The record gives the reactivity of an RNA of 177 nucleotides to DMS and 2A3.
RNA sequence: GGGAACGACUCGAGUAGAGUCGAAAAGGAUAAAUUGCGCUUUUAUCUGGGCGAAGACAACUACACCAGCACACAACUCUAUUUCUGGAUUAACCACUAUUUCGAACGCGCUGAACUGGUUGUCAAAACUAAAUGCACCUUUCGAGGUGCAUUUAGUAAAAGAAACAACAACAACAAC
Reactivity to DMS in 0.01 (KOAc 150mM, MgCl2 10mM, bicine 150mM(pH8.5), 24C), signal-to-noise 3, nucleotides 027 to 126: g010g020a030u000a010a050a060u000u030g020c040g030c150u000u000u010u000a040u010c060u000g000g010g010c090g020a170a080g000a070c080a020a030c010u000a160c130a110c300c040a040g010c020a040c050a060c110a060a120c050u000c020u000a070u000u000u000c070u000g020g010a180u010u000a110a160c030c040a070c060u000a030u000u000u010c080g010a030a060c110g010c050g000c010u010g000a060a260c190u000g000g000u000u000g010u000c040a030a090a050
Reactivity to 2A3 in 0.01 (KOAc 150mM, MgCl2 10mM, bicine 150mM(pH8.5), 24C), signal-to-noise 2, nucleotides 027 to 126: g000g000a000u090a070a140a050u120u170g090c090g010c070u000u040u020u050a080u040c000u060g070g040g010c020g050a110a020g010a020c000a030a000c020u080a010c030a040c070c000a010g000c000a000c000a010c010a080a160c030u020c020u070a090u050u110u040c040u050g000g040a040u180u170a130a090c020c010a000c080u110a110u110u110u100c050g030a030a030c060g020c010g010c080u000g010a040a010c040u020g000g000u000u000g000u000c000a050a130a000
The reactions ran in a buffer of 150 mM KOAc, 10 mM MgCl2 and 150 mM bicine (pH 8.5), at 24 C. For DMS the reverse transcriptase was MarathonRT. Reactivities are rounded to 0.1 and cut off at 0 and 3.